[RMDB]
Conditions: 150 mM KOAc, 10 mM MgCl2 and 150 mM bicine (pH 8.5), 24 C. Structure probing data (2A3 and DMS) for a 177-nucleotide construct. For 2A3, 3,848 sequencing reads were counted. It was measured as part of the RMDB library OK2TST. Reactivities are given for positions 27 through 126.
RNA sequence: GGGAACGACUCGAGUAGAGUCGAAAAGUGACGAUUGAUGUGGUUGCAGAACCUCGCUCGCUACCCCACUUCAACCAGCUCAACUCUGCCACCGUAGGUGCGGUGCCAGCACCGGGCACGGCUAUGAGAUCGUACUAGGUUUCGACCUAGUACGAUCAAAAGAAACAACAACAACAAC
Reactivity to 2A3 in 0.01 (KOAc 150mM, MgCl2 10mM, bicine 150mM(pH8.5), 24C), signal-to-noise 3, nucleotides 027 to 126: g010u030g010a030c040g020a110u050u250g090a090u180g070u040g050g030u050u090g030c050a010g050a160a060c010c030u020c020g030c040u040c010g000c000u070a130c010c000c050c010a050c020u160u120c030a140a140c020c040a020g000c010u000c020a000a070c030u030c000u040g030c020c010a020c010c000g030u040a090g000g230u180g130c020g040g000u010g040c000c010a040g000c030a020c000c000g000g020g000c070a060c080g020g000c020u090a080u180g130a090
Reactivity to DMS in 0.01 (KOAc 150mM, MgCl2 10mM, bicine 150mM(pH8.5), 24C), signal-to-noise 4, nucleotides 027 to 126: g000u000g010a050c040g010a110u010u010g010a130u010g020u000g010g000u010u000g000c200a070g010a070a070c010c030u000c050g020c090u000c020g010c040u000a100c120c030c000c060a130c130u010u000c100a080a110c030c030a060g040c030u010c020a030a110c060u000c030u000g000c140c040a030c040c060g020u000a120g000g020u010g000c010g020g030u000g010c140c030a080g000c080a040c030c050g010g000g030c070a030c100g020g020c040u000a090u000g000a220